[RMDB]
RNA sequence: GGGAACGACUCGAGUAGAGUCGAAAAUCACAAAGCGGAUUUAGCUCGGUUGGGAGAGGUCCAGACCGAAGAUCUGGUUGUCCUGUGAUCGAGACACAGAAUUCGCACCAUAAACAACGGGAGAUUCGCGAUGCAUGAUAUUCGUAUCAUGCAUCGCAAAAGAAACAACAACAACAAC
Reactivity to DMS in 0.01 (KOAc 150mM, MgCl2 10mM, bicine 150mM(pH8.5), 24C), signal-to-noise 2, nucleotides 027 to 126: u040c110a120c160a130a120a180g000c030g000g000a000u010u000u000a100g050c020u000c040g000g000u000u000g030g010g000a000g000a010g110g000u010c000c030a050g000a000c000c040g000a150a030g000a300u000c020u030g000g000u000u010g000u060c000c000u000g000u050g030a000u000c030g030a030g000a060c210a150c130a080g100a030a030u010u000c000g000c060a130c080c150a230u000a090a100a180c240a090a170c060g000g000g040a030g020a060u060u040c080
Reactivity to 2A3 in 0.01 (KOAc 150mM, MgCl2 10mM, bicine 150mM(pH8.5), 24C), signal-to-noise 3, nucleotides 027 to 126: u110c040a010c080a130a050a000g020c000g030g010a000u010u010u000a050g010c000u000c000g040g030u040u070g010g020g020a060g000a020g070g070u000c010c000a010g000a040c000c100g280a130a050g010a140u010c020u010g050g000u070u050g100u080c000c000u070g110u180g060a020u000c000g010a010g170a060c050a000c000a090g070a010a010u000u000c000g000c000a010c000c000a050u170a030a140a030c050a040a040c070g010g060g000a090g010a110u140u090c080
Chemical mapping of a 177-nucleotide RNA with DMS and 2A3. The reactions ran in a buffer of 150 mM KOAc, 10 mM MgCl2 and 150 mM bicine (pH 8.5), at 24 C. For 2A3, 2,184 sequencing reads were counted.